The data come from the RNA Mapping Database (RMDB), library VIROID. The record gives the reactivity of an RNA of 177 nucleotides to DMS. For DMS the reverse transcriptase was MarathonRT.
RNA sequence: GGGAACGACUCGAGUAGAGUCGAAAAACGGCGAGGGGAUGUCUCCCAAGAAGGUCAAAGAGAAGGCAAGAAUCGGAGGAUUUCCCCAAAACGCUGGAGACAUCCUGGAAGGGGAAAGAGGACAGAUUAUCCUUAAUAGGUUCGCCUAUUAAGGAUAAAAAGAAACAACAACAACAAC
Reactivity to DMS in 0.01 (KOAc 150mM, MgCl2 10mM, bicine 150mM(pH8.5), 24C), signal-to-noise 5, nucleotides 027 to 126: a090c090g010g010c060g010a130g010g010g000g010a030u010g000u000c010u000c010c010c100a070a110g020a070a070g000g010u010c060a050a100a110g010a120g010a090a070g000g000c060a050a070g000a100a050u000c060g010g020a090g010g010a110u000u000u000c010c020c010c150a030a060a090a100c140g010c090u000g010g000a040g010a040c060a030u000c000c020u000g010g000a080a120g000g000g000g000a020a030a040g000a060g000g000a100c120a060g000a200u000